[RMDB]
RNA sequence: GGGAACGACUCGAGUAGAGUCGAAAAGGCGAGGUCUUCGGACCUCGCCAAAUGACCGCCAUUAUUGGCUAUGGCUACACGGACGGCCGGGUCAAAUGCCGAAAACUUCCGCCUUCGGGCGGAAGAACCAGGGUAUUAAGUUCGCUUAAUACCCUGGAAAAGAAACAACAACAACAAC
Reactivity to 2A3 in 0.01 (KOAc 150mM, MgCl2 10mM, bicine 150mM(pH8.5), 24C), signal-to-noise 2, nucleotides 027 to 126: g010g010c020g020a000g090g000u090c050u160u230c300g120g010a000c000c000u010c000g000c000c000a010a000a000u020g000a000c000c000g110c000c010a090u160u180a160u270u300g030g010c030u050a100u300g010g000c010u030a020c070a030c150g000g090a010c020g010g020c010c000g020g010g000u020c000a030a010a010u080g000c020c010g000a040a030a050a060c020u000u000c000c020g030c020c040u010u070c210g090g000g000c010g010g000a000a000g000a000a010
Reactivity to DMS in 0.01 (KOAc 150mM, MgCl2 10mM, bicine 150mM(pH8.5), 24C), signal-to-noise 1, nucleotides 027 to 126: g000g000c000g040a000g040g000u000c010u000u000c220g020g020a000c000c000u000c000g040c010c010a040a000a020u000g010a030c010c020g070c000c010a090u010u000a220u030u010g010g020c000u010a030u000g030g020c000u010a070c120a120c040g000g000a020c020g000g000c000c000g040g000g030u000c000a030a050a020u000g000c000c000g000a230a100a100a170c000u000u000c010c000g000c000c020u000u010c240g040g000g000c000g020g010a000a000g000a020a030